The record gives the reactivity of an RNA of 177 nucleotides to DMS and 2A3. It was measured as part of the RMDB library OK1LIB. 2A3 is a SHAPE reagent: it acylates the 2'-hydroxyl of flexible nucleotides of all four kinds. For 2A3, 6,242 sequencing reads were counted. 2A3 adducts were read by reverse transcription with SuperScript II with manganese. Conditions: 150 mM KOAc, 10 mM MgCl2 and 150 mM bicine (pH 8.5), 24 C.

RNA sequence: GGGAACGACUCGAGUAGAGUCGAAAAGGACCGCCCAACAGGGGCGGGGCGAACGAUUGCAAAAGCUUCGUUGUGCCCCAUGGCCAUACGGACAGCCGGGUCCACUGCCGAAAAGAAAAAGAACAAACGACUAGUUGGACUUCGGUCCAGCUAGUCGAAAAGAAACAACAACAACAAC
Reactivity to DMS in 0.01 (KOAc 150mM, MgCl2 10mM, bicine 150mM(pH8.5), 24C), signal-to-noise 3, nucleotides 027 to 126: g020g000a050c030c000g000c000c040c030a200a140c280a140g040g000g020g010c020g010g000g010g030c010g020a000a020c000g000a000u000u020g000c000a190a100a230a130g000c000u010u000c000g000u000u000g000u000g000c000c000c050c020a110u000g020g050c000c070a070u000a120c060g000g010a040c030a190g000c010c000g050g000g000u000c000c000a140c160u050g000c000c010g000a300a050a030a100g000a030a080a060a040a180g020a030a160c210a050a100a140
Reactivity to 2A3 in 0.01 (KOAc 150mM, MgCl2 10mM, bicine 150mM(pH8.5), 24C), signal-to-noise 5, nucleotides 027 to 126: g010g010a010c010c000g020c000c010c000a180a200c170a150g000g060g000g000c010g010g000g000g020c000g000a000a000c000g050a070u080u160g020c030a160a150a150a150g010c020u010u000c000g010u000u030g180u150g050c010c010c000c000a030u230g040g000c020c010a040u070a100c020g010g030a020c010a000g010c000c000g000g000g000u000c010c010a010c020u030g010c000c010g060a030a060a020a000g130a020a110a020a010a000g120a080a040c070a070a070a010